RNA sequence: GGGAACGACUCGAGUAGAGUCGAAAAUAAGAGCAUGUACGAAUCACGAUAUGAGAGUUCCUGGUGAAUCCCGGGUACAAGGAAAGGUAUUAAUGUCCCACUGCGUUCCCUUGCAGUAGGGAUAUAAGAAAUUGCACUAAUUCGUUAGUGCAAUUUCAAAAGAAACAACAACAACAAC
Reactivity to 2A3 in 0.01 (KOAc 150mM, MgCl2 10mM, bicine 150mM(pH8.5), 24C), signal-to-noise 3, nucleotides 027 to 126: u160a050a010g070a050g050c060a040u100g040u120a030c050g060a100a050u080c060a020c120g050a080u060a060u300g080a110g020a020g040u040u020c010c020u030g090g000u070g130a090a070u070c030c010c000g040g010g000u000a020c030a040a040g060g020a150a040a030g050g010u100a060u160u080a230a050u100g010u000c010c000c000a000c000u000g000c010g030u030u030c000c000c000u010u050g000c010a000g010u090a060g030g010g000a000u000a000u000a010a000
Reactivity to DMS in 0.01 (KOAc 150mM, MgCl2 10mM, bicine 150mM(pH8.5), 24C), signal-to-noise 4, nucleotides 027 to 126: u020a060a080g000a100g020c060a020u010g020u000a040c060g010a100a050u000c040a050c070g010a140u000a110u000g000a100g010a190g010u000u000c000c020u000g000g020u010g010a100a120u000c090c010c030g010g010g020u000a030c070a060a060g000g010a030a060a050g010g010u000a050u000u000a070a060u000g010u000c000c000c000a040c010u000g000c010g020u000u010c020c020c020u000u000g000c000a010g000u000a080g020g010g000a000u000a000u010a050a120